RNA sequence: GGGAACGACUCGAGUAGAGUCGAAAAAGCGUAGCGGUACGCCGCUACGCAAGGCGCAUUUGAACUGUAUUGUACGCCUUGCAUAAAGCAAAAGUUCUAAAAAAACGUGCCGUUACGACGGCACGAAAAAACAUCCAUUGGUUCGCCAAUGGAUGAAUCUUUGUAUCUUCUUCGGAAGAUACAAAGAAAAAGAAACAACAACAACAAC
Reactivity to DMS in 0.01 (KOAc 150mM, MgCl2 10mM, bicine 150mM(pH8.5), 24C), signal-to-noise 2, nucleotides 027 to 156: a080g000c010g030u020a000g050c010g040g020u000a070c250g040c030c000g030c020u000a010c020g050c000a010a000g000g010c000g040c020a040u020u010u000g010a080a180c140u030g030u010a300u010u000g030u010a030c010g000c000c010u000u000g000c030a150u010a030a110a110g030c040a040a090a090a180g000u000u000c020u020a000a000a050a050a070a060a150c010g050u000g010c000c000g030u000u010a110c300g050a110c000g040g090c010a020c020g030a000a000a010a080a050a060c000a000u010c000c000a010u020u000g020g040u000u000c280g000c080c010a000a010u010g030g010a000u010g010a030a020
Reactivity to 2A3 in 0.01 (KOAc 150mM, MgCl2 10mM, bicine 150mM(pH8.5), 24C), signal-to-noise 3, nucleotides 027 to 156: a000g030c010g000u010a000g000c000g000g000u030a040c230g050c040c000g010c000u000a000c000g010c000a000a010g000g000c000g010c030a090u090u080u200g090a090a050c060u060g070u290a160u190u120g080u120a030c020g000c000c000u010u000g020c020a060u130a200a140a050g030c040a030a030a030a000g010u000u020c040u140a020a060a030a010a020a030a060c010g000u000g000c000c000g000u010u040a060c260g010a010c000g050g000c000a000c000g000a010a000a000a000a000a000c000a000u000c000c000a000u000u000g020g020u020u040c120g040c050c000a000a000u000g000g000a000u000g000a000a000
Annotation:
The record gives the reactivity of an RNA of 207 nucleotides to DMS and 2A3. For DMS, 2,886 sequencing reads were counted. For DMS the reverse transcriptase was MarathonRT. The reactions ran in a buffer of 150 mM KOAc, 10 mM MgCl2 and 150 mM bicine (pH 8.5), at 24 C. High DMS reactivity at an A or C suggests that its Watson-Crick edge is free. Values cover nucleotides 27 to 156.